[RMDB]
RNA sequence: GGGAACGACUCGAGUAGAGUCGAAAAGGUCAGGAGAUCGAGACCAUCCUGGCCACCAUGGUGAAACCUGUCUCUACUAAAAGUACUAAAAUUAGCCAGGCGUGGUGGCAGGUGCCUGUAGUCCCAGCUACUCUGGAGGCUGAGGCAGGAGAAUCACUGACUCUUCUGAAUUCGUUCAGAAGAGUCAAAAAGAAACAACAACAACAAC
Reactivity to 2A3 in 0.01 (KOAc 150mM, MgCl2 10mM, bicine 150mM(pH8.5), 24C), signal-to-noise 3, nucleotides 027 to 156: g010g000u010c010a010g020g000a020g010a170u160c190g050a040g040a120c040c020a020u010c000c000u000g020g030c000c010a010c000c020a060u110g040g020u050g050a070a130a070c010c000u010g020u010c010u010c000u030a060c010u040a050a070a090a060g150u090a070c050u070a040a080a280a300u240u070a080g070c060c020a070g030g030c010g030u060g010g000u020g000g030c000a000g010g030u030g000c000c060u050g080u120a000g030u000c000c000c000a000g000c030u080a050c060u060c010u110g060g070a110g020g000c040u020g030a020g020g000c000a010g020g030a030g120a050a010u050c040a030c000
Reactivity to DMS in 0.01 (KOAc 150mM, MgCl2 10mM, bicine 150mM(pH8.5), 24C), signal-to-noise 1, nucleotides 027 to 156: g040g020u000c020a010g010g010a110g000a050u010c040g000a120g050a030c060c080a140u000c000c010u000g020g030c030c010a010c050c030a050u040g020g070u000g000a100a070a110c000c000u000g000u000c030u010c010u000a130c010u000a070a030a040a130g000u010a260c040u000a020a040a040a100u000u000a110g050c020c080a090g010g000c000g010u000g000g040u000g010g040c000a020g010g020u000g030c020c000u020g000u000a060g050u000c000c000c000a050g000c050u010a070c100u000c070u010g010g020a170g050g000c010u000g020a040g040g010c000a110g000g010a040g010a090a090u000c040a160c110
Structure probing data (2A3 and DMS) for a 207-nucleotide construct. For DMS the reverse transcriptase was MarathonRT. Conditions: 150 mM KOAc, 10 mM MgCl2 and 150 mM bicine (pH 8.5), 24 C. For 2A3, 1,424 sequencing reads were counted.